An RNA of 177 nucleotides, treated with 2A3 and DMS and read out base by base. The RNA was probed in 150 mM KOAc, 10 mM MgCl2 and 150 mM bicine (pH 8.5) at 24 C.

[RMDB]
RNA sequence: GGGAACGACUCGAGUAGAGUCGAAAACGAGGAUUUCAUCAUCGAUAGUACAUUACACCAUCACAUAUUUGUAAUGUGCUAAGAUGGUCGUAUGUGAUGGUGAUCAUCUUAUCGAUGGUGAAGUCAGGCUACUCGUUGAUUUCGAUCAAUGAGUAGCAAAAGAAACAACAACAACAAC
Reactivity to 2A3 in 0.01 (KOAc 150mM, MgCl2 10mM, bicine 150mM(pH8.5), 24C), signal-to-noise 9, nucleotides 027 to 126: c060g030a100g170g000a000u000u000u000c000a000u000c000a000u000c000g000a000u000a010g040u050a030c030a070u060u060a020c000a000c010c010a020u030c010a020c010a030u090a040u060u120u110g130u130a130a120u110g070u090g110c060u070a060a070g090a100u120g030g040u030c010g010u010a010u030g030u020g020a030u040g010g020u020g010a040u020c010a000u000c000u040u040a010u000c000g000a000u000g000g000u000g000a000a000g000u000c000a000g080
Reactivity to DMS in 0.01 (KOAc 150mM, MgCl2 10mM, bicine 150mM(pH8.5), 24C), signal-to-noise 4, nucleotides 027 to 126: c070g000a160g010g000a000u000u000u000c000a010u000c010a000u000c000g000a030u000a020g010u010a090c170a050u010u020a070c000a020c050c020a010u000c020a020c030a010u000a020u000u020u020g000u010a040a050u020g020u020g020c170u020a050a060g010a050u010g000g010u000c070g000u000a010u000g000u000g010a010u010g000g020u000g000a020u010c080a060u000c020u020u010a010u000c000g010a010u010g000g020u000g000a000a010g000u000c000a090g020